[RMDB]
This 177-nucleotide RNA was probed chemically with 2A3 and DMS.
For DMS, 3,016 sequencing reads were counted.
The 2A3 profile rests on 8,031 reads.
Conditions: 150 mM KOAc, 10 mM MgCl2 and 150 mM bicine (pH 8.5), 24 C.
RNA sequence: GGGAACGACUCGAGUAGAGUCGAAAAGGUCACCUCUUCGGAGGUGACCAAAAUACCGCCCGAACGGCUUCCUGACCGGGCGGUAAAACUAAAACAGGAGCAAAACCCGACUGUUCGCAGUCGGGAACUAUCAUAGUUUGUUCGCAAACUAUGAUAGAAAAGAAACAACAACAACAAC
Reactivity to 2A3 in 0.01 (KOAc 150mM, MgCl2 10mM, bicine 150mM(pH8.5), 24C), signal-to-noise 3, nucleotides 027 to 126: g010g000u000c000a010c010c000u020c030u050u100c270g050g000a000g000g010u000g010a000c000c000a000a000a000a000u010a000c000c000g010c010c000c010g010a020a010c020g050g000c010u180u040c030c010u010g020a010c000c020g000g010g020c020g000g000u000a000a010a000a020c030u060a010a000a050a150c020a020g010g010a010g010c020a030a030a070a100c000c000c000g010a000c000u000g050u050u110c240g010c160a000g010u010c000g020g000g000a000a000
Reactivity to DMS in 0.01 (KOAc 150mM, MgCl2 10mM, bicine 150mM(pH8.5), 24C), signal-to-noise 2, nucleotides 027 to 126: g000g020u010c000a020c000c000u010c000u010u020c190g020g000a020g020g010u010g000a000c000c010a010a010a040a140u000a050c000c000g010c010c000c010g000a020a070c070g010g000c020u010u000c010c010u000g000a200c130c000g000g000g000c010g010g000u010a000a010a060a090c130u000a060a070a130a080c050a020g000g000a010g000c050a140a070a100a150c000c000c000g000a030c000u000g020u010u010c180g030c000a020g000u020c000g000g000g010a010a020